[RMDB]
RNA sequence: GGGAACGACUCGAGUAGAGUCGAAAAGUGCUCCCAUCUAAACAUCUAAAUCAGCCAUCUGGUUUCCUUAACAGUAGCACAGACUCUGGGAGUUUGAGAGAAUGUGUCUCUUGUGAAUAAGAGAAAAUAAGUCCAUACUGGGGAAGGUAGCUCUCCAAAUUUUAAAUGCAUUCGUGCAUUUAAAAUUAAAAGAAACAACAACAACAAC
Reactivity to 2A3 in 0.01 (KOAc 150mM, MgCl2 10mM, bicine 150mM(pH8.5), 24C), signal-to-noise 4, nucleotides 027 to 156: g080u090g040c020u020c010c020c010a030u050c060u140a130a140a060c020a100u040c010u070a060a090a040u070c040a030g060c060c020a060u050c080u050g070g000u070u060u060c010c010u050u070a070a010c020a070g050u110a030g020c020a010c000a050g050a070c020u000c040u060g070g100g030a090g050u080u190u230g070a010g000a000g020a050a040u040g040u020g030u040c000u020c010u040u080g090u060g140a120a090u200a130a030g030a000g030a020a050a010a060u140a080a020g040u000c030c020a030u040a130c050u060g020g020g000g020a020a010g030g000u050a020g030c020u020c010u000c060c000a010
Reactivity to DMS in 0.01 (KOAc 150mM, MgCl2 10mM, bicine 150mM(pH8.5), 24C), signal-to-noise 3, nucleotides 027 to 156: g010u000g040c040u000c000c010c010a150u010c070u000a110a100a100c040a070u010c030u000a050a100a080u000c050a100g030c070c080a080u000c030u010g000g000u000u000u000c030c030u000u000a070a130c030a080g000u000a070g010c010a050c040a080g020a180c030u020c020u000g020g040g010a110g020u000u000u010g010a080g000a090g010a070a120u000g010u000g000u000c020u000c010u000u000g000u010g030a140a160u000a040a080g010a070g010a070a040a090a090u000a040a060g010u000c020c010a140u000a060c100u020g020g010g010g010a070a030g010g010u000a050g040c070u000c010u000c020c020a090